[RMDB]
RNA sequence: GGGAACGACUCGAGUAGAGUCGAAAAGAGUCCACAGCAAAGAGGCACAGAGGGGAACGGCAGCUCCUUGGGUCCCACGGGGCUGUGCCUGCUCCUUGGUGGGGACACUGGAGGCCCAGAGUGGCACGCCUAGAUAUCAGUUCGCUGAUAUCUAGGCAAAAGAAACAACAACAACAAC
Reactivity to 2A3 in 0.01 (KOAc 150mM, MgCl2 10mM, bicine 150mM(pH8.5), 24C), signal-to-noise 1, nucleotides 027 to 126: g040a010g040u020c030c010a000c010a030g080c030a050a070a050g060a060g050g000c030a010c040a120g070a040g010g050g000g040a090a020c030g050g020c000a010g000c000u020c000c000u060u060g110g020g110u120c060c030c010a010c040g000g000g020g010c020u030g010u010g000c000c000u080g010c010u020c020c000u060u040g080g000u060g010g030g030g010a010c020a010c090u090g040g090a040g110g000c000c000c020a050g070a030g070u170g020g010c040a020c050
Reactivity to DMS in 0.01 (KOAc 150mM, MgCl2 10mM, bicine 150mM(pH8.5), 24C), signal-to-noise 4, nucleotides 027 to 126: g000a150g010u000c010c010a040c050a080g010c090a050a070a060g020a080g020g030c040a080c110a090g000a100g000g000g010g000a080a080c100g010g000c050a040g000c010u000c010c000u000u000g010g020g000u010c090c020c000a110c140g000g000g010g010c010u010g000u000g010c050c030u000g010c020u000c040c050u000u000g010g030u010g010g010g010g010a070c040a080c040u020g000g010a110g010g000c030c020c020a150g000a110g010u000g010g020c070a090c170